This 207-nucleotide RNA was probed chemically with 2A3 and DMS. DMS adducts were read by reverse transcription with MarathonRT. It was measured as part of the RMDB library M2RFPK. For 2A3, 938 sequencing reads were counted.
RNA sequence: GGGAACGACUCGAGUAGAGUCGAAAAAGAAUGCACCACAGCGUAAAAUCGUCUGAUUGGGUGAGUUGGUCGCACCGCCAUUUGACGAACGAACGCCAAGCCUAAGCCGUCUUUGUGCAUUAAGUGGAAAAGGAGCCCCAGUUCGCUGGGGCUCCAAGUAUACGAAGAGAUUCGUCUCUUCGUAUACAAAAGAAACAACAACAACAAC
Reactivity to 2A3 in 0.01 (KOAc 150mM, MgCl2 10mM, bicine 150mM(pH8.5), 24C), signal-to-noise 1, nucleotides 027 to 156: a000g060a010a030u040g000c000a000c020c000a010c070a050g000c010g000u020a030a050a020a150u040c000g000u000c020u000g030a050u020u100g020g030g010u040g040a080g020u080u110g110g040u080c050g030c060a010c010c000g100c070c000a010u010u030u070g000a000c000g000a080a000c060g020a030a000c000g000c090c070a060a040g000c020c040u080a060a030g040c050c020g100u050c070u040u050u100g010u010g000c000a000u000u040a080a050g000u020g030g030a030a060a120a170g020g000a000g020c000c000c000c000a020g000u010u090c190g010c060u000g000g020g000g000c000u010c000c000a000a000
Reactivity to DMS in 0.01 (KOAc 150mM, MgCl2 10mM, bicine 150mM(pH8.5), 24C), signal-to-noise 1, nucleotides 027 to 156: a050g000a150a040u000g000c010a040c000c090a110c110a090g000c020g020u000a080a020a130a130u000c010g010u000c020u010g000a120u000u000g000g020g010u000g000a060g030u000u010g010g000u000c100g000c030a060c040c000g000c040c020a100u000u000u000g010a020c000g000a070a080c030g000a150a030c040g000c030c030a070a190g100c100c040u000a110a100g000c040c020g000u000c050u010u000u020g000u000g030c000a040u000u010a060a040g010u010g010g010a070a060a130a170g000g000a070g020c000c000c000c030a000g000u000u030c210g010c100u020g040g010g080g020c000u000c000c000a000a060